[RMDB]
RNA sequence: GGGAACGACUCGAGUAGAGUCGAAAACGCGGAGAACCUGUCCGCGACAUGGAGAUAGUUUUCUCCAAGCUUUUCCGCAAGACGGAGUUCCGAGCGGUCAACAAGCUCUCCGUACUGCGUCUGCUCAUAUGGGCAUACUCCGCCAAGCAGGAUACAGGCCAAGCGAAUAUUUCGAUAUUCGCUUGGCAAAAGAAACAACAACAACAAC
Reactivity to 2A3 in 0.01 (KOAc 150mM, MgCl2 10mM, bicine 150mM(pH8.5), 24C), signal-to-noise 1, nucleotides 027 to 156: c000g000c000g000g020a020g030a020a030c000c000u000g010u010c000c000g020c030g010a010c000a120u060g040g000a010g000a020u030a110g210u140u070u160u030c010u000c040c020a000a030g000c000u070u100u130u000c060c030g000c010a020a010g000a000c020g050g030a030g010u150u050c110c000g000a010g000c040g050g060u050c020a040a150c050a150a000g000c000u000c050u010c100c070g020u040a110c020u040g060c000g050u020c010u030g030c000u000c080a160u190a130u300g010g030g030c010a010u040a140c030u010c060c000g000c040c000a070a000g020c030a020g040g030a060u130a270c040a040g130